[RMDB]
RNA sequence: GGGAACGACUCGAGUAGAGUCGAAAAGAGAUCGCGGCUGGGGCUUAGGACCCCACUCCUGCGAGACAGGAGUAAUCCUAAACAGGGUUUUCACCCUUCCUUUAGUUUCCUUCCUCUCCUGGAGAGGCUAUGUAAGAUAGUUCGCUAUCUUACAUAGAAAAGAAACAACAACAACAAC
Reactivity to DMS in 0.01 (KOAc 150mM, MgCl2 10mM, bicine 150mM(pH8.5), 24C), signal-to-noise 7, nucleotides 027 to 126: g000a120g010a060u000c030g020c050g010g010c300u000g010g000g010g010c050u000u010a070g010g000a120c010c010c020c030a020c020u000c050c000u000g020c030g010a110g000a170c060a010g000g000a010g010u000a120a070u000c040c000u010a020a050a110c220a040g000g000g020u000u000u010u010c190a090c020c000c000u000u010c040c030u000u010u010a100g010u000u000u000c020c030u000u000c000c000u000c000u000c010c170u010g020g010a030g000a030g010g000
Reactivity to 2A3 in 0.01 (KOAc 150mM, MgCl2 10mM, bicine 150mM(pH8.5), 24C), signal-to-noise 6, nucleotides 027 to 126: g040a010g010a030u050c040g000c020g090g010c040u040g020g000g000g010c010u040u070a040g050g060a120c000c000c000c020a010c000u000c000c000u010g000c070g180a140g030a050c010a000g000g000a000g000u020a010a040u020c010c000u020a030a020a030c140a050g040g020g010u070u090u220u250c100a060c000c000c000u030u080c050c010u080u130u050a040g010u030u040u000c020c000u070u120c020c000u030c010u010c040c170u130g030g020a020g000a000g010g000